[RMDB]
Conditions: 150 mM KOAc, 10 mM MgCl2 and 150 mM bicine (pH 8.5), 24 C. This 177-nucleotide RNA was probed chemically with 2A3 and DMS. DMS adducts were read by reverse transcription with MarathonRT.
RNA sequence: GGGAACGACUCGAGUAGAGUCGAAAAAGGAUCGUAUGCAAGUAUGUGCCUCUUGUUUUGGUACUCAUUGUGUGAGCUUGCUGGGUCCAACAUUCGCUUACCAUUACGAGCACUAUGCUGCCAUGUAGACGUGUCUGUCUUUCGAGACAGACACGUCAAAAGAAACAACAACAACAAC
Reactivity to 2A3 in 0.01 (KOAc 150mM, MgCl2 10mM, bicine 150mM(pH8.5), 24C), signal-to-noise 2, nucleotides 027 to 126: a000g080g000a040u040c030g030u210a030u130g000c000a000a000g010u050a070u300g010u020g010c010c020u040c070u180u130g170u130u300u100u030g000g000u000a000c000u030c060a160u140u260g160u120g000u070g200a010g040c000u020u010g000c000u030g010g000g010u000c000c000a000a000c010a030u100u100c030g000c110u030u070a030c060c000a110u130u100a050c070g040a050g090c020a010c010u090a140u210g000c030u010g000c070c030a100u140g020u120a060
Reactivity to DMS in 0.01 (KOAc 150mM, MgCl2 10mM, bicine 150mM(pH8.5), 24C), signal-to-noise 1, nucleotides 027 to 126: a120g050g000a030u000c010g030u020a040u010g000c030a020a020g000u000a100u000g000u000g010c020c010u020c150u010u020g000u000u000u040u020g020g050u000a080c020u000c090a180u030u000g000u010g040u000g010a080g010c010u000u000g000c020u000g020g000g020u000c000c000a020a130c120a110u000u000c100g010c040u000u000a070c070c070a110u000u000a110c110g000a050g030c050a050c090u000a090u000g000c060u000g020c000c040a080u010g020u000a140